[RMDB]
RNA sequence: GGGAACGACUCGAGUAGAGUCGAAAACAGUGCAAAGUAAAGCAGUAGCAAUCCAUACGGUGAUACUCGCCAUUUCGUCACCCUCUUUAGUUGAUGAGCAGAGUCUAUUCCAUCUGCUCGCCAGGAGACACCACAAUUUCUUCGGAAAUUGUGGUGUAAAAGAAACAACAACAACAAC
Reactivity to DMS in 0.01 (KOAc 150mM, MgCl2 10mM, bicine 150mM(pH8.5), 24C), signal-to-noise 2, nucleotides 027 to 126: c090a100g020u000g000c060a070a120a110g020u000a070a110a120g010c040a030g050u000a070g000c070a070a050u010c080c080a070u000a070c090g000g010u000g000a170u010a050c030u000c100g010c160c100a110u000u000u000c030g000u000c060a090c040c010c050u000c040u000u000u000a080g000u030u000g000a020u010g000a000g000c000a020g010a020g000u010c220u010a130u000u000c130c090a130u000c000u000g010c020u000c010g010c020c010a070g000g000a170g000
Reactivity to 2A3 in 0.01 (KOAc 150mM, MgCl2 10mM, bicine 150mM(pH8.5), 24C), signal-to-noise 2, nucleotides 027 to 126: c030a010g080u050g090c040a020a060a210g070u210a140a070a040g030c040a010g040u090a020g010c040a070a050u000c030c060a060u050a170c120g070g000u020g010a010u010a070c020u020c020g020c060c020a000u060u100u070c020g050u030c040a220c030c000c010u080c030u060u060u070a140g060u100u140g070a200u060g010a010g000c000a000g000a020g060u000c060u120a150u120u110c020c000a130u000c010u010g000c010u000c000g000c030c000a050g000g090a010g000